[RMDB]
RNA sequence: GGGAACGACUCGAGUAGAGUCGAAAAGAUAUGGAAAGGGACCCGUGUUCCUCUAUGAAGACAUCGGAAACGAUGUUGGAGAGGGCACGCCCUUUCCUAAGUCAAAACCUCAAGUUCGCUUGAGGAAUCCGAAUUACCUGUUCGCAGGUAAUUCGGAAAAAGAAACAACAACAACAAC
Reactivity to DMS in 0.01 (KOAc 150mM, MgCl2 10mM, bicine 150mM(pH8.5), 24C), signal-to-noise 1, nucleotides 027 to 126: g000a000u000a300u000g000g000a010a060a080g000g020g030a300c180c300c280g000u000g010u000u000c010c000u010c030u010a200u000g000a180a190g000a010c000a030u000c000g010g000a090a150a210c000g000a000u000g000u000u000g010g000a040g000a050g000g000g000c000a060c000g070c000c030c000u000u000u000c010c010u000a000a020g000u000c050a110a150a140a100c000c000u010c000a010a010g010u000u010c290g050c010u000u000g000a010g010g000a050a000
Reactivity to 2A3 in 0.01 (KOAc 150mM, MgCl2 10mM, bicine 150mM(pH8.5), 24C), signal-to-noise 1, nucleotides 027 to 126: g000a040u080a040u110g000g020a000a000a000g050g000g000a070c150c140c120g070u020g020u200u300c060c010u090c030u090a300u220g000a020a000g000a010c000a010u000c000g010g040a070a040a040c000g000a000u000g000u010u070g000g000a010g010a000g030g000g000c030a000c000g080c000c000c000u010u000u000c000c000u010a010a010g000u020c000a030a030a100a260c010c010u000c000a000a010g010u100u190c290g000c190u000u010g010a000g010g000a010a160
Structure probing data (DMS and 2A3) for a 177-nucleotide construct. The 2A3 profile rests on 1,489 reads.